Structure probing data (2A3 and DMS) for a 207-nucleotide construct. For DMS, 1,261 sequencing reads were counted.
[RMDB]
RNA sequence: GGGAACGACUCGAGUAGAGUCGAAAAGAAUGAAGUACAGACAAAGCCAUAACGCGUGUACAACUACACAUUGUCCUAUAAUAUUGUCUGAUAAAAAACAGUGUAGAAAUAUUCUGACAGGGAAAUAGCAAAUGUAUUAAUUUAACUUACCUUGCAAGACCUCCGUAUAUUUCGAUAUACGGAGGUCAAAAGAAACAACAACAACAAC
Reactivity to 2A3 in 0.01 (KOAc 150mM, MgCl2 10mM, bicine 150mM(pH8.5), 24C), signal-to-noise 2, nucleotides 027 to 156: g110a000a080u210g000a040a030g020u060a050c010a030g040a040c040a060a050a000g000c000c030a190u100a210a030c080g050c050g050u060g010u070a020c020a070a040c100u040a000c020a000c000a090u040u090g050u070c010c020u070a050u030a300a080u080a060u110u100g030u000c010u030g080a080u130a060a110a050a000a000a020c080a010g020u000g000u000a000g010a000a030a010u030a010u000u070c050u110g060a090c030a010g020g000g020a090a040a040u080a150g000c000a000a000a060u050g060u070a180u200u200a160a020u050u040u020a000a010c010u000u010a000c000c000u010u030g000c020a060a000
Reactivity to DMS in 0.01 (KOAc 150mM, MgCl2 10mM, bicine 150mM(pH8.5), 24C), signal-to-noise 1, nucleotides 027 to 156: g010a150a060u000g000a040a150g000u010a110c000a020g010a130c040a130a080a280g020c050c070a130u020a130a080c080g000c080g050u010g040u010a250c080a070a110c060u000a110c040a040c000a120u000u000g000u000c040c020u000a200u000a040a140u010a080u000u000g000u000c000u010g000a070u000a000a040a080a040a140a060c060a040g040u010g020u000a110g020a050a050a140u000a050u000u000c020u000g050a070c000a090g000g020g020a070a100a140u010a060g000c000a020a020a020u020g000u010a130u020u000a040a090u000u000u000a070a020c010u020u000a070c000c020u000u000g040c000a060a130